Background:
Chemical mapping of a 170-nucleotide RNA with DMS and 2A3. The 2A3 profile rests on 52,593 reads. The DMS profile rests on 44,506 reads. Source: RMDB library 15KLIB, as collected in RNAgym.
RNA sequence: GGGAACGACUCGAGUAGAGUCGAAAACCUCGGGCCGAAGGGUUGAGUAGCACUCAAAGGGAGGAAUCCACUCGGAGUAGAACAGAGAAAUCACCUCCAGAGGACCCCUUCAGCGAACAGAGGCGCUUACCUUGAGAGUUCGCUCUCAAGAAAAGAAACAACAACAACAAC
Reactivity to DMS in 0.01 (KOAc 150mM, MgCl2 10mM, bicine 150mM(pH8.5), 24C), signal-to-noise 9, nucleotides 027 to 129: c030c020u020c050g000g020g020c040c000g010a080a060g010g010g040u030u020g020a080g030u000a110g020c070a300c060u010c050a040a080a140g000g000g000a040g010g010a090a140u050c070c050a070c010u030c090g010g010a050g020u020a060g000a070a110c110a120g020a090g030a090a080a030u030c080a130c100c000u000c030c000a100g000a040g000g020a110c090c020c010c030u020u020c040a060g000c030g010a060a060c050a100g000a050g000g010c140g000c050u030u030a070c110
Reactivity to 2A3 in 0.01 (KOAc 150mM, MgCl2 10mM, bicine 150mM(pH8.5), 24C), signal-to-noise 9, nucleotides 027 to 129: c000c000u010c020g010g040g010c010c010g020a040a020g020g030g010u050u070g040a030g030u140a040g080c070a050c100u020c030a070a080a060g120g010g000a060g020g040a050a050u020c030c020a040c040u040c060g050g050a080g060u190a070g060a140a040c110a050g060a010g070a070a080a020u100c050a080c030c000u000c010c010a010g010a010g020g050a040c020c000c000c000u010u040c020a020g020c010g020a050a020c040a050g020a020g030g000c010g010c060u030u060a060c010